[RMDB]
RNA sequence: GGGAACGACUCGAGUAGAGUCGAAAAGAUGAACUGAAAAAGAUUCAAAGUAGCGGUUUGAGCAAUGUGUAUAGACAGUAACCCGGUAAAAUGUACUGAAAAUAGGGAUAAGAGUUGAACAGGUGCAAGUUGCUUUAAUAUUCGUAUUAAAGCAACUAAAAGAAACAACAACAACAAC
Reactivity to DMS in 0.01 (KOAc 150mM, MgCl2 10mM, bicine 150mM(pH8.5), 24C), signal-to-noise 9, nucleotides 027 to 126: g010a120u010g000a060a040c050u010g010a060a060a130a110a070g010a130u010u010c030a050a090a120g020u010a060g010c040g010g010u010u010u010g010a080g020c040a050a050u010g010u000g010u010a070u010a060g010a100c050a030g010u020a050a100c050c030c020g010g010u020a040a040a060a070u020g010u010a040c050u000g000a050a030a060a080u020a060g000g000g000a090u020a040a060g010a060g010u010u000g000a040a070c100a060g000g000u010g010c090a060
Reactivity to 2A3 in 0.01 (KOAc 150mM, MgCl2 10mM, bicine 150mM(pH8.5), 24C), signal-to-noise 6, nucleotides 027 to 126: g090a030u060g020a040a030c020u030g080a070a020a040a000a030g130a170u060u060c070a090a060a030g040u030a030g020c020g030g050u010u030u090g040a030g000c030a050a050u050g030u010g010u050a050u050a120g060a030c010a010g030u010a030a030c010c010c000g000g020u090a090a090a030a040u150g050u070a020c010u020g050a010a030a050a070u130a050g010g030g000a020u050a120a080g010a010g010u030u070g030a050a030c040a070g020g000u030g040c010a020